Chemical mapping of a 307-nucleotide RNA with 2A3 and DMS. Reactivities are given for positions 27 through 266. For 2A3 the reverse transcriptase was SuperScript II with manganese.
RNA sequence: GGGAACGACUCGAGUAGAGUCGAAAAAGCGACCGCUCAUUACGAUGAGCGGUCGCAAUUCUCAGCGCGUGCUUGAGCACGAUAUUGGGGAAGGACACGCCCUUGAGCCGCGCGGUGCGGAUAUAUUGCGCCGUCAUCACCUCGGUCAUCGAGGCGCGGGUCAUCCGCGCGAUAUAACCCAUGCCAUAGAGCGCGAUGGUCAGCACCGGCAGGAAGAAGUUCUCGAAUGUCGGCUGCACACCUCCUACGCUACGGCGUAGGAGGUGAACAGGCAAUUCGUUGCCUGUAAAAGAAACAACAACAACAAC
Reactivity to 2A3 in 0.01 (KOAc 150mM, MgCl2 10mM, bicine 150mM(pH8.5), 24C), signal-to-noise 1, nucleotides 027 to 266: a000g040c040g010a030c050c000g110c020u000c040a010u010u080a020c200g110a000u000g040a000g010c100g000g000u010c030g070c030a040a000u000u010c030u020c000a030g020c030g010c000g000u060g010c040u210u300g060a080g040c040a000c050g040a050u040a120u170u210g030g000g000g000a050a050g060g000a000c000a010c030g020c000c000c000u010u010g010a030g000c030c000g000c000g010c010g020g000u010g000c030g040g050a010u070a000u010a060u230u140g010c090g040c010c010g070u100c060a140u070c050a050c000c030u050c030g000g080u150c120a100u170c120g010a010g000g070c030g000c020g030g010g020u040c060a040u030c020c000g040c010g000c000g010a030u040a000u010a120a020c000c000c000a000u010g060c020c000a090u060a100g100a000g030c030g000c020g030a040u040g010g020u120c060a020g000c000a000c000c000g010g000c010a050g090g000a080a120g050a140a000g060u090u100c050u120c140g060a010a000u010g050u040c000g000g000c030u010g000c040a000c020a000c050c020u000c000c010u010a000c020g000c000u000a070c300g090g040c010g010u000a000g030g000a000g000g000u000g000a000
Reactivity to DMS in 0.01 (KOAc 150mM, MgCl2 10mM, bicine 150mM(pH8.5), 24C), signal-to-noise 3, nucleotides 027 to 266: a140g010c020g060a020c010c010g080c000u020c000a020u000u000a100c130g030a090u010g020a010g050c060g070g020u000c020g050c010a000a000u000u000c020u000c000a120g010c210g010c020g010u000g000c010u020u030g000a150g000c030a020c050g000a100u020a030u000u000g010g020g000g000a050a110g010g000a120c020a090c060g000c040c030c080u010u010g000a040g010c010c030g010c300g020c100g010g030u000g000c040g000g000a130u030a060u000a110u010u020g000c080g000c010c070g010u000c090a040u010c090a120c090c050u020c040g010g010u010c210a110u010c010g010a050g000g020c110g000c050g000g000g000u010c080a050u010c070c170g030c010g040c040g000a060u000a030u010a120a130c080c050c050a100u010g000c020c030a100u000a090g000a190g010c010g000c020g000a040u010g000g030u000c170a070g000c020a040c030c000g000g000c030a040g010g010a160a090g000a090a200g000u020u000c050u000c040g000a300a090u000g000u000c010g000g000c170u000g000c060a220c010a010c000c000u000c000c010u000a010c010g010c000u000a110c160g040g010c000g000u000a000g000g000a000g000g030u000g000a020
The RNA was probed in 150 mM KOAc, 10 mM MgCl2 and 150 mM bicine (pH 8.5) at 24 C.